[RMDB]
RNA sequence: GGGAACGACUCGAGUAGAGUCGAAAAUGCAGGCAAGAGACCACCGUAAGCGUCGUUGCAGCAAUAUAAGCGCCGAUUCAUAUCAGCGCGACUAUGCUCUCGCUGCCUAAGCGAUGGCUAGUCUGUCAGACCGGGAACGCCCUCGUCCCGGAGCCUGGCCAGAGUUGUAGUUCGCUACAACUCUGGCAAAAGAAACAACAACAACAAC
Reactivity to 2A3 in 0.01 (KOAc 150mM, MgCl2 10mM, bicine 150mM(pH8.5), 24C), signal-to-noise 2, nucleotides 027 to 156: u130g040c020a020g030g000c040a070a050g020a000g040a130c000c040a040c040c050g090u190a040a040g010c010g040u060c050g130u260u170g000c080a040g010c000a070a080u060a040u040a180a000g020c010g000c000c010g020a010u050u170c180a080u220a010u300c000a000g050c000g000c000g020a030c060u000a000u130g030c010u000c010u040c110g010c010u010g040c000c080u110a150a010g030c010g010a000u010g010g000c000u000a010g000u010c020u000g110u030c040a030g030a050c020c000g000g010g000a030a030c090g010c020c030c000u060c030g110u080c000c000c000g020g000a000g000c000c000u000g000
An RNA of 207 nucleotides, treated with 2A3 and read out base by base. As a SHAPE reagent, 2A3 marks flexible, mostly unpaired nucleotides at the ribose 2'-OH. The 2A3 profile rests on 706 reads. Reactivities are rounded to 0.1 and cut off at 0 and 3. 2A3 adducts were read by reverse transcription with SuperScript II with manganese.